Description: Chemical mapping of a 177-nucleotide RNA with 2A3. For 2A3, 1,436 sequencing reads were counted. 2A3 adducts were read by reverse transcription with SuperScript II with manganese. The data come from the RNA Mapping Database (RMDB), library TTRDEL. 2A3 is a SHAPE reagent: it acylates the 2'-hydroxyl of flexible nucleotides of all four kinds.
RNA sequence: GGGAACGACUCGAGUAGAGUCGAAAAGAUAUGGACGUAGAGACCACUACCCACCUACGGCCAUCGGAAACGAUGGGCGUAGAGGUGGUGUAGUCCUAAGUCAAACCUAGGCGUUCGCGCCUAGGAAGUGUGUCAUGGGGUUCGCCCCAUGACACACAAAAGAAACAACAACAACAAC
Reactivity to 2A3 in 0.01 (KOAc 150mM, MgCl2 10mM, bicine 150mM(pH8.5), 24C), signal-to-noise 1, nucleotides 027 to 126: g140a030u240a220u300g180g000a010c000g030u030a010g100a000g040a190c010c000a010c010u030a020c010c000c060a300c080c000u000a000c000g270g150c010c010a020u030c010g010g030a060a080a080c010g000a000u000g000g080g030c000g000u010a000g030a030g030g000u020g000g000u000g030u050a050g000u040c000c040u020a080a000g000u010c000a000a020a190c000c000u100a020g000g000c000g060u030u260c300g010c020g040c130c020u010a000g010g000a010a000